Structure probing data (2A3 and DMS) for a 177-nucleotide construct.
The RNA was probed in 150 mM KOAc, 10 mM MgCl2 and 150 mM bicine (pH 8.5) at 24 C.
For DMS the reverse transcriptase was MarathonRT.
It was measured as part of the RMDB libraries RFM100 and RFMREP.
RNA sequence: GGGAACGACUCGAGUAGAGUCGAAAACCGUGUCGCACCCUCACGGUGCGUGGCGUUUCCUCUCGCCCCAAUUAUGCGCAGGCGCGCAUCACCGAAGUGUUACCGCCCACGCAUUCCCGCGCGCGCCUAGUCUAUUUGAAUUCGUUCAAAUAGACUAAAAAGAAACAACAACAACAAC
Reactivity to 2A3 in 0.01 (KOAc 150mM, MgCl2 10mM, bicine 150mM(pH8.5), 24C), signal-to-noise 9, nucleotides 027 to 126: c010c000g010u020g030u020c040g000c030a040c010c000c010u130c050a090c100g010g000u010g000c010g010u010g060g010c040g000u010u060u030c010c000u030c010u030c020g040c010c000c000c010a040a090u180u080a060u180g070c080g000c050a040g110g010c040g000c000g000c050a030u060c020a020c020c040g070a120a040g030u040g050u140u080a040c020c010g030c010c010c000a020c020g020c010a040u020u030c000c000c000g010c010g000c000g000c010g000c020c000
Reactivity to DMS in 0.01 (KOAc 150mM, MgCl2 10mM, bicine 150mM(pH8.5), 24C), signal-to-noise 9, nucleotides 027 to 126: c050c010g010u010g010u010c040g010c040a050c020c010c080u010c150a100c160g000g020u000g010c020g020u010g000g010c060g000u010u000u000c020c010u000c050u010c050g010c020c010c010c040a070a100u020u020a060u010g020c070g010c100a090g010g010c040g020c020g010c020a100u010c100a060c060c080g010a090a080g010u010g010u000u010a090c070c040g010c040c010c020a060c040g010c040a130u000u010c010c010c010g020c110g010c010g000c020g010c020c030